RNA sequence: GGGAACGACUCGAGUAGAGUCGAAAAUGGAGGGUGAUACUCCCGUUCAUCCCUGAGUUGCUCGUGCGUACGAUCCGUUUUCUUUGAGUCGCGUUGUUUGGGAAUGCAGCGCAAAGUAGGUGGUAAACCAAGUAGACAAGUUCGCUUGUCUACUUGGAAAAGAAACAACAACAACAAC
Reactivity to DMS in 0.01 (KOAc 150mM, MgCl2 10mM, bicine 150mM(pH8.5), 24C), signal-to-noise 2, nucleotides 027 to 126: u010g020g020a080g010g000g010u000g020a160u020a180c100u010c010c010c040g010u000u010c100a060u000c010c020c030u010g000a090g010u010u000g020c040u000c060g000u000g020c060g030u000a070c070g020a050u000c030c040g010u000u000u000u000c060u000u000u010g010a060g000u000c090g000c040g020u000u000g000u000u000u010g010g010g020a080a090u010g000c000a020g020c020g010c020a040a050a070g010u010a070g000g000u000g000g000u000a080a080a220
Reactivity to 2A3 in 0.01 (KOAc 150mM, MgCl2 10mM, bicine 150mM(pH8.5), 24C), signal-to-noise 3, nucleotides 027 to 126: u120g020g000a050g040g040g060u070g040a080u130a210c040u030c030c010c000g050u030u040c030a050u050c000c000c050u090g080a130g070u110u090g090c020u010c060g040u050g040c060g040u060a060c010g020a030u010c050c000g020u040u120u020u010c090u030u080u110g100a050g040u100c050g010c020g030u000u020g050u050u070u050g070g010g020a050a010u030g000c010a010g000c010g000c020a010a020a020g040u080a040g050g040u050g040g050u070a020a020a020
Chemical mapping of a 177-nucleotide RNA with DMS and 2A3. Conditions: 150 mM KOAc, 10 mM MgCl2 and 150 mM bicine (pH 8.5), 24 C. It was measured as part of the RMDB library RFMREP. Reactivities are given for positions 27 through 126.